[RMDB]
RNA sequence: GGGAACGACUCGAGUAGAGUCGAAAAUUGUAGUGUUACGACAGGGAUAUCAACAUGUGAAAUUAUGGAUUCUAUUGACCAUUUUCAGGAUCUAAUACUUUGUAAAUGUCGUAAACCUAAUAAAUCCGCCCUCGGAUUAUUUCGAUAAUCCGAGGGCAAAAGAAACAACAACAACAAC
Reactivity to 2A3 in 0.01 (KOAc 150mM, MgCl2 10mM, bicine 150mM(pH8.5), 24C), signal-to-noise 2, nucleotides 027 to 126: u120u190g060u020a000g000u000g000u180u000a000c000g000a010c000a000g000g170g000a040u190a060u200c000a030a150c110a280u060g130u080g280a030a050a100u070u050a120u090g000g000a000u070u070c040u030a140u140u300g030a090c030c010a050u070u040u110u090c040a000g010g020a010u050c070u030a130a000u060a150c050u150u060u000g090u120a060a160a160u000g000u000c000g000u000a000a080a060c010c000u010a010a010u070a040a090a050u020c010c000
An RNA of 177 nucleotides, treated with 2A3 and read out base by base. Reactivities are given for positions 27 through 126. It was measured as part of the RMDB library OK1LIB. For 2A3, 917 sequencing reads were counted. For 2A3 the reverse transcriptase was SuperScript II with manganese.